[RMDB]
RNA sequence: GGGAACGACUCGAGUAGAGUCGAAAACGUCUGGAUUAUCCAGAGCGAUGGAACAGAUUGCAGACAGGACGCUGUUCAUCUGAUUGUAUUUCUGUAAGUAGUGAUUUUCUAGCUGUUUGUAAUUGCUGAUAUGCUUUUCAUAUCCAGCCAGAGAAAAUAUUAUCUCACCUUUCGAGGUGAGAUAAUAAAAAGAAACAACAACAACAAC
Reactivity to DMS in 0.01 (KOAc 150mM, MgCl2 10mM, bicine 150mM(pH8.5), 24C), signal-to-noise 3, nucleotides 027 to 156: c060g020u000c000u000g010g000a300u010u000a130u000c010c000a030g000a100g010c050g020a140u000g010g000a080a070c030a060g000a100u010u010g010c030a090g010a150c110a160g000g020a090c060g020c030u000g010u010u010c040a060u000c040u010g000a140u000u000g010u000a100u010u000u000c010u000g010u010a070a210g000u000a110g030u000g000a170u000u010u000u000c010u000a060g010c000u000g000u000u000u010g040u000a060a050u000u000g020c020u010g020a090u000a060u000g010c140u000u000u000u000c050a040u000a040u000c070c030a030g010c010c050a050g000a090g000a080a060a070a140
Reactivity to 2A3 in 0.01 (KOAc 150mM, MgCl2 10mM, bicine 150mM(pH8.5), 24C), signal-to-noise 4, nucleotides 027 to 156: c020g070u000c010u010g000g060a120u120u080a110u300c000c000a000g010a030g050c050g060a050u120g070g060a040a010c000a020g060a050u070u080g010c030a010g030a060c010a040g130g000a010c050g000c100u050g030u110u030c030a050u030c050u050g080a220u080u100g040u120a090u040u130u030c030u030g090u090a100a110g040u050a020g040u060g130a130u000u070u040u030c020u040a030g000c010u000g060u070u070u070g060u110a080a100u080u070g010c010u010g080a070u010a030u130g020c060u140u080u050u150c040a030u030a020u100c080c050a010g020c020c020a040g040a020g020a090a000a020a080

Overview
The data come from the RNA Mapping Database (RMDB), library OK3TST. The record gives the reactivity of an RNA of 207 nucleotides to DMS and 2A3. For DMS the reverse transcriptase was MarathonRT. For 2A3 the reverse transcriptase was SuperScript II with manganese.